The record gives the reactivity of an RNA of 177 nucleotides to DMS and 2A3. The RNA was probed in 150 mM KOAc, 10 mM MgCl2 and 150 mM bicine (pH 8.5) at 24 C. For DMS, 1,400 sequencing reads were counted.

RNA sequence: GGGAACGACUCGAGUAGAGUCGAAAACUCUCUGUGAGUGUGAGACUCACACAGUCACACAGUGUGUCUGUCACACUCUCAGUCUCAGUGUCUCACUGUCUCACUGACUCUCUCAGACACACUCUGAGUCAUAACCCGCAUUCGUGCGGGUUAUGACAAAAGAAACAACAACAACAAC
Reactivity to DMS in 0.01 (KOAc 150mM, MgCl2 10mM, bicine 150mM(pH8.5), 24C), signal-to-noise 2, nucleotides 027 to 126: c050u000c050u010c060u000g000u000g000a010g010u000g000u000g000a010g020a050c060u000c020a050c020a020c110a070g010u010c210a110c180a230c240a080g020u000g010u000g000u000c100u000g000u000c020a040c040a020c010u000c020u010c020a000g010u000c090u000c060a050g000u000g000u000c070u020c040a110c100u020g040u000c020u020c240a110c040u000g000a030c060u000c050u000c060u010c050a050g000a050c020a020c140a110c100u010c100u000g020a200
Reactivity to 2A3 in 0.01 (KOAc 150mM, MgCl2 10mM, bicine 150mM(pH8.5), 24C), signal-to-noise 2, nucleotides 027 to 126: c020u040c000u000c030u020g000u000g000a010g000u000g000u010g010a040g050a030c010u010c080a010c010a000c000a030g200u200c020a050c010a010c060a200g020u010g000u020g010u020c030u050g140u050c010a010c000a000c010u040c010u020c010a010g060u000c020u010c070a050g030u020g040u000c010u010c090a070c050u030g030u070c010u050c090a090c060u070g030a040c000u020c000u040c000u000c050a020g000a070c010a010c000a030c100u020c020u090g070a020